[RMDB]
Source: RMDB library OK3TST, as collected in RNAgym.
An RNA of 207 nucleotides, treated with 2A3 and read out base by base.
Reactivities are given for positions 27 through 156.

RNA sequence: GGGAACGACUCGAGUAGAGUCGAAAACAUCGCGGGUAGAAGCGCCAAAGAGUAUUUAUCUGAAAACCUGGUACAGUUUAUACAGGCCACCCAAAACUAUUUCAAUAUUGGAGAAAAGUUUAGGGAUCCCUAUGUUGCUCCCUCUGCUGGUGUGACCCUCCUACGAAGUAUUCGUACUUCGUAGGAGAAAAGAAACAACAACAACAAC
Reactivity to 2A3 in 0.01 (KOAc 150mM, MgCl2 10mM, bicine 150mM(pH8.5), 24C), signal-to-noise 1, nucleotides 027 to 156: c010a070u070c000g000c150g000g000g000u060a100g050a200a100g090c070g000c130c020a110a110a070g080a060g030u030a070u080u070u020a140u080c030u020g030a060a090a130a160c050c130u170g010g080u210a040c000a020g000u060u130u000a080u050a110c010a000g030g030c010c020a010c000c000c000a040a090a000a040c130u150a300u070u030u040c010a080a000u100a210u300u250g100g010a090g020a100a020a000a000g010u030u030u080a050g000g000g000a000u010c000c000c030u050a030u050g030u010u050g010c010u030c060c020c000u110c060u050g000c060u080g000g010u060g070u120g080a060c050c010